An RNA of 207 nucleotides, treated with 2A3 and read out base by base. The RNA was probed in 150 mM KOAc, 10 mM MgCl2 and 150 mM bicine (pH 8.5) at 24 C. Source: RMDB library OK3TST, as collected in RNAgym.
[RMDB]
RNA sequence: GGGAACGACUCGAGUAGAGUCGAAAAAAGGAGAACUUCUUCGUCCGGUACCGCAGGUUCGACAGCUUCACUCAUGUCAAUCAACAACUGGAGCAAUGGAUAGCCGAUGUGGCUGACAAACGGGAGCUUCGCCAGUUCAAAGAAACGCCGGAACAGCUCCCGAGAGUUUAUUCGUAAACUCUCGGGAAAAAGAAACAACAACAACAAC
Reactivity to 2A3 in 0.01 (KOAc 150mM, MgCl2 10mM, bicine 150mM(pH8.5), 24C), signal-to-noise 1, nucleotides 027 to 156: a000a000g030g000a040g010a070a000c060u070u060c020u040u030c030g010u000c030c090g040g000u010a050c000c070g010c090a010g080g050u030u080c070g000a000c010a090g040c000u030u020c050a090c130u050c050a010u070g040u080c040a050a030u070c040a020a110c020a050a100c070u080g030g000a020g030c120a160a100u130g040g030a080u120a040g000c030c000g040a040u120g070u050g030g000c010u000g000a010c030a040a030a010c010g030g010g000a000g000c010u000u010c040g000c040c000a000g000u000u030c010a170a010a000g000a090a030a020c010g300c280c300g000g050a050a040c000a000g010c000